[RMDB]
RNA sequence: GGGAACGACUCGAGUAGAGUCGAAAAGGGCGUCAUUUCGAUGACGCCCAUACGUCUACUCCGAUUGGCGAGGACGACCCCGACGGGCGCGUUUGCCAAUCGCACCGUCCAGAUUCGUCUGGACGAAAGUAUACCCAUCUUUCGAGAUGGGUAUACUAAAAGAAACAACAACAACAAC
Reactivity to DMS in 0.01 (KOAc 150mM, MgCl2 10mM, bicine 150mM(pH8.5), 24C), signal-to-noise 6, nucleotides 027 to 126: g010g000g010c000g020u010c000a010u000u000u010c160g020a020u000g020a010c000g020c000c000c010a000u000a010c280g000u000c000u000a030c010u000c010c010g010a020u000u000g000g000c000g010a050g010g000a040c000g000a150c000c000c010c110g030a160c300g000g010g000c020g010c030g000u000u000u000g000c000c010a000a010u000c000g000c100a070c210c010g010u000c000c000a010g000a030u000u010c160g010u000c000u000g000g000a000c010g010a010a020
Reactivity to 2A3 in 0.01 (KOAc 150mM, MgCl2 10mM, bicine 150mM(pH8.5), 24C), signal-to-noise 7, nucleotides 027 to 126: g000g010g000c010g010u000c010a020u050u070u170c220g080a020u020g000a000c000g000c000c000c000a000u010a000c000g030u000c000u010a010c000u000c010c000g000a010u000u010g010g010c040g020a080g080g060a080c010g120a170c000c000c000c060g250a170c160g000g000g010c130g000c020g080u010u020u080g000c000c000a000a000u000c000g000c000a050c020c040g000u000c000c000a000g000a010u020u070c120g070u010c100u000g000g000a000c000g000a010a010